[RMDB]
This 170-nucleotide RNA was probed chemically with 2A3 and DMS. The 2A3 profile rests on 74,412 reads. Source: RMDB library 15KLIB, as collected in RNAgym. Reactivities are given for positions 27 through 129. DMS adducts were read by reverse transcription with MarathonRT. 2A3 adducts were read by reverse transcription with SuperScript II with manganese.
RNA sequence: GGGAACGACUCGAGUAGAGUCGAAAAGUGGGUUCACAUCCCCAACCCGCGGGCCGGCUACUCUUCUUUCCCUUCUCUCGUCUUCCUCGGUCAACCUCCGGAGUUCCUCUUCCUCCUCCUUGCUGAGCUACUACCCUGUUCGCAGGGUAGAAAAGAAACAACAACAACAAC
Reactivity to 2A3 in 0.01 (KOAc 150mM, MgCl2 10mM, bicine 150mM(pH8.5), 24C), signal-to-noise 9, nucleotides 027 to 129: g070u070g010g050g000u140u150c110a060c030a280u130c020c000c000c000a010a050c000c000c000g000c020g010g010g030c020c010g020g010c010u060a050c020u030c000u100u010c010u020u050u030c010c020c000u070u020c040u000c010u020c010g070u010c010u080u030c010c010u020c010g010g020u040c030a070a070c010c010u030c020c020g030g010a050g010u030u010c010c000u020c000u030u020c000c000u000c000c000u030c010c000u000u020g010c010u020g020a010g010c000u020a020
Reactivity to DMS in 0.01 (KOAc 150mM, MgCl2 10mM, bicine 150mM(pH8.5), 24C), signal-to-noise 9, nucleotides 027 to 129: g040u030g030g020g040u030u040c110a090c130a130u010c040c010c020c050a070a080c050c000c010g060c040g010g000g020c070c020g050g000c050u000a010c070u010c040u020u000c030u000u000u000c010c010c020u010u010c040u010c000u020c020g020u010c030u020u030c040c030u000c060g000g040u040c080a060a150c060c030u010c030c000g010g020a090g030u010u020c010c000u020c050u020u010c000c000u020c020c010u030c000c000u020u010g030c040u020g010a070g000c020u000a090